The record gives the reactivity of an RNA of 177 nucleotides to DMS and 2A3. DMS adducts were read by reverse transcription with MarathonRT. For DMS, 9,020 sequencing reads were counted. For 2A3 the reverse transcriptase was SuperScript II with manganese. The reactions ran in a buffer of 150 mM KOAc, 10 mM MgCl2 and 150 mM bicine (pH 8.5), at 24 C. The 2A3 profile rests on 15,346 reads.
RNA sequence: GGGAACGACUCGAGUAGAGUCGAAAAGAAUUGGUAUGUAAGCUACUACUUCCGGUAGCUGCGUCACACUUUAAGAGUGUGCAUACUGAGCCGAAGCUCAGCUUCGGUCCCCCAAGGGAAGAACAAAACCAUAGCUACCAUUCGUGGUAGCUAUGGUAAAAGAAACAACAACAACAAC
Reactivity to DMS in 0.01 (KOAc 150mM, MgCl2 10mM, bicine 150mM(pH8.5), 24C), signal-to-noise 4, nucleotides 027 to 126: g000a070a050u010u010g000g000u000a000u000g010u000a300a210g010c000u000a000c010u000a090c000u000u000c010c000g000g010u000a000g000c000u000g000c000g010u010c010a000c000a020c000u000u040u050a200a050g010a020g020u000g000u000g000c000a010u000a000c010u010g000a000g000c000c000g000a000a000g020c010u030c200a120g010c010u010u000c010g010g010u000c030c030c000c210c180a180a100g010g000g000a000a010g030a300a110c230a080a040a070
Reactivity to 2A3 in 0.01 (KOAc 150mM, MgCl2 10mM, bicine 150mM(pH8.5), 24C), signal-to-noise 9, nucleotides 027 to 126: g130a020a100u030u020g000g000u000a000u000g000u000a020a000g010c000u000a010c010u040a080c000u000u000c000c000g000g000u000a000g000c000u000g000c000g000u010c000a010c000a010c010u080u140u300a300a130g210a010g290u010g000u000g000c000a000u000a000c000u010g000a000g000c000c000g000a000a000g000c030u090c300a050g000c010u030u000c000g000g000u010c000c000c000c000c010a040a050g100g000g000a010a010g010a010a020c070a020a070a000